Record summary: The data come from the RNA Mapping Database (RMDB), library RFM100. The record gives the reactivity of an RNA of 177 nucleotides to 2A3 and DMS. The RNA was probed in 150 mM KOAc, 10 mM MgCl2 and 150 mM bicine (pH 8.5) at 24 C. For DMS the reverse transcriptase was MarathonRT. For 2A3, 1,286 sequencing reads were counted. Reactivities are given for positions 27 through 126. The DMS profile rests on 1,112 reads.
[RMDB]
RNA sequence: GGGAACGACUCGAGUAGAGUCGAAAAGAAAGAAAGAAACUAGUCUGCCUACUUCCCGUCUACUCCUUUCGUCAUUCGUUGAUACGAAUACGAAUGACAAUCGAGUGGGUGAGAAGGAAGACUUGAAAUGUUCCGGACUAUUCGUAGUCCGGAACAUAAAAGAAACAACAACAACAAC
Reactivity to 2A3 in 0.01 (KOAc 150mM, MgCl2 10mM, bicine 150mM(pH8.5), 24C), signal-to-noise 2, nucleotides 027 to 126: g090a000a030a000g170a020a110a010g080a040a060a000c050u050a040g020u020c000u040g110c020c000u120a160c030u010u000c000c000c000g000u000c000u000a000c000u000c000c010u010u030u060c220g000u000c010a010u000u000c000g010u040u030g070a090u070a300c150g090a040a070u110a070c000g000a000a000u000g000a000c000a000a000u000c000g010a010g000u000g000g000g030u080g020a040g000a000a000g020g030a000a000g000a000c000u000u010g040a170a180
Reactivity to DMS in 0.01 (KOAc 150mM, MgCl2 10mM, bicine 150mM(pH8.5), 24C), signal-to-noise 1, nucleotides 027 to 126: g000a080a090a000g000a030a020a020g080a280a050a130c070u000a000g020u000c030u000g000c180c200u120a250c000u000u000c000c000c000g050u030c000u020a050c000u000c000c080u060u010u000c160g030u000c000a020u000u000c000g040u030u000g060a250u050a240c110g000a110a040u040a000c000g000a000a030u010g000a010c000a040a000u000c290g000a000g000u000g000g000g000u000g000a040g000a000a080g000g000a140a030g000a040c000u000u000g000a130a040